Chemical mapping of a 207-nucleotide RNA with 2A3.
For 2A3 the reverse transcriptase was SuperScript II with manganese.
Values cover nucleotides 27 to 156.
The RNA was probed in 150 mM KOAc, 10 mM MgCl2 and 150 mM bicine (pH 8.5) at 24 C.

[RMDB]
RNA sequence: GGGAACGACUCGAGUAGAGUCGAAAAGUAGUUAUGCUGAAAAUCGUUGAGGUUGUAUGGAAUAGUUUAACCGUAAGACCUUAAGUUGAAAAACUUUAAAAUUAAUCUCAGGUAAAUUACUUUGAGUAAAACCUUCGUCGUUUCGACGACGAAGGAAGCUUCAGAAUAACUUCGGUUAUUCUGAAGCAAAAGAAACAACAACAACAAC
Reactivity to 2A3 in 0.01 (KOAc 150mM, MgCl2 10mM, bicine 150mM(pH8.5), 24C), signal-to-noise 1, nucleotides 027 to 156: g040u010a010g000u060u030a040u300g060c000u030g020a060a020a090a210u170c090g050u050u090g090a090g080g000u050u050g070u060a020u050g010g040a080a120u010a190g100u100u100u150a120a070c000c000g000u010a000a070g010a010c000c000u010u010a000a000g020u030u050g050a030a070a000a000a000c030u070u110u240a050a220a110a050u080u050a150a170u150c020u000c030a000g030g010u060a080a080a160u040u070a020c000u110u060u080g030a040g080u100a000a040a040a130c000c000u010u000c000g000u020c000g000u000u010u100c090g040a000c000g000a000c020g000a000a000g000g010a000a000